[RMDB]
RNA sequence: GGGAACGACUCGAGUAGAGUCGAAAAUGAUAGGCUUUCGAGCCUAUCAACUGCGUAGCUGCGUUAAAAUUUUAGCUACGCUUAAUAAAAAUUUUUAUCGCAAAUAUAAGGUCUUCGGACCUUAUAAUCAUGAACUUAUAUUCGUAUAAGUUCAUGAAAAAGAAACAACAACAACAAC
Reactivity to DMS in 0.01 (KOAc 150mM, MgCl2 10mM, bicine 150mM(pH8.5), 24C), signal-to-noise 2, nucleotides 027 to 126: u000g010a030u000a010g010g000c000u000u000u010c220g010a030g010c000c010u000a000u010c000a050a140c080u000g000c000g000u000a010g020c010u010g030c140g010u000u000a000a020a090a150u010u010u010u010a050g010c000u000a000c000g010c010u000u000a010a040u020a010a060a110a090a070u000u020u000u000u000a030u000c030g000c050a110a120a170u010a010u000a010a000g000g010u010c000u000u010c220g030g000a010c010c000u000u000a000u000a030a080
Reactivity to 2A3 in 0.01 (KOAc 150mM, MgCl2 10mM, bicine 150mM(pH8.5), 24C), signal-to-noise 2, nucleotides 027 to 126: u040g010a010u000a000g000g020c000u080u060u140c230g030a000g000c020c020u000a000u000c000a000a010c010u010g000c010g000u000a020g020c010u050g000c020g040u020u040a110a140a200a290u150u260u160u160a040g010c000u000a010c000g000c000u040u030a090a020u060a000a070a020a010a030u160u120u040u110u170a120u110c020g030c010a040a180a010u070a020u000a060a010g020g000u010c010u060u100c220g080g010a010c010c000u000u000a000u000a000a010
Description
Structure probing data (DMS and 2A3) for a 177-nucleotide construct. The DMS profile rests on 1,881 reads. 2A3 adducts were read by reverse transcription with SuperScript II with manganese.